Annotation
Chemical mapping of a 177-nucleotide RNA with DMS and 2A3. 2A3 adducts were read by reverse transcription with SuperScript II with manganese. Source: RMDB library OK1LIB, as collected in RNAgym.
RNA sequence: GGGAACGACUCGAGUAGAGUCGAAAAGAAACACCUCGGUGCGUCUGGAUGUUUGUUCGCAGAACUAAGGUGCAGAAGGGCAGCGACGCCCUUGCGAUGGUAAAUAAAAGCUUUCAGGUCGUACGGAACUGGCAUUACCGUUCGCGGUAAUGCCAGUAAAAGAAACAACAACAACAAC
Reactivity to DMS in 0.01 (KOAc 150mM, MgCl2 10mM, bicine 150mM(pH8.5), 24C), signal-to-noise 1, nucleotides 027 to 126: g030a060a100a200c010a000c110c010u020c020g000g050u000g020c080g010u000c000u050g000g000a020u000g010u050u000u000g120u040u020c020g000c040a010g000a080a000c160u040a110a110g000g000u020g000c210a230g010a090a120g000g000g050c000a150g000c220g000a210c030g050c010c040c000u000u000g000c090g000a000u020g000g030u030a120a040a120u090a040a060a070a050g070c010u000u000u030c000a040g000g010u000c010g010u010a090c000g000g000a020
Reactivity to 2A3 in 0.01 (KOAc 150mM, MgCl2 10mM, bicine 150mM(pH8.5), 24C), signal-to-noise 2, nucleotides 027 to 126: g050a000a090a000c040a040c010c000u000c030g150g000u030g010c000g050u000c000u050g000g030a040u000g080u000u090u060g090u000u170c110g040c130a040g010a060a000c040u110a080a160g160g020u150g060c020a040g040a160a070g010g050g000c000a020g060c000g160a040c080g030c020c000c000u000u000g000c020g000a040u100g120g090u170a060a130a020u180a000a110a030a000g040c000u000u000u040c050a000g050g080u120c000g030u000a000c050g040g010a000